[RMDB]
RNA sequence: GGGAACGACUCGAGUAGAGUCGAAAAGAUAUGGAGGAUCCCAUGUGCUGAUGACCCAUGGGCUCUGAGAAUCGGAAACGAUUCUCAGAGCCCAUGGCAAGGCAUGCAUGGGAGUCCUCCUAAGUCACUGUUAAUAAUACUUCGGUAUUAUUAACAGAAAAGAAACAACAACAACAAC
Reactivity to DMS in 0.01 (KOAc 150mM, MgCl2 10mM, bicine 150mM(pH8.5), 24C), signal-to-noise 3, nucleotides 027 to 126: g000a070u000a300u010g000g010a010g020g010a300u010c000c000c000a010u000g010u010g030c080u000g010a060u020g010a260c300c000c000a010u000g020g010g030c000u000c010u030g000a020g010a050a000u000c020g000g000a150a100a210c010g010a040u000u000c000u000c000a010g010a000g000c000c000c000a000u000g010g000c010a010a070g000g020c010a020u010g010c060a010u000g010g010g010a030g010u000c000c000u000c000c000u000a000a100g000u000c040a260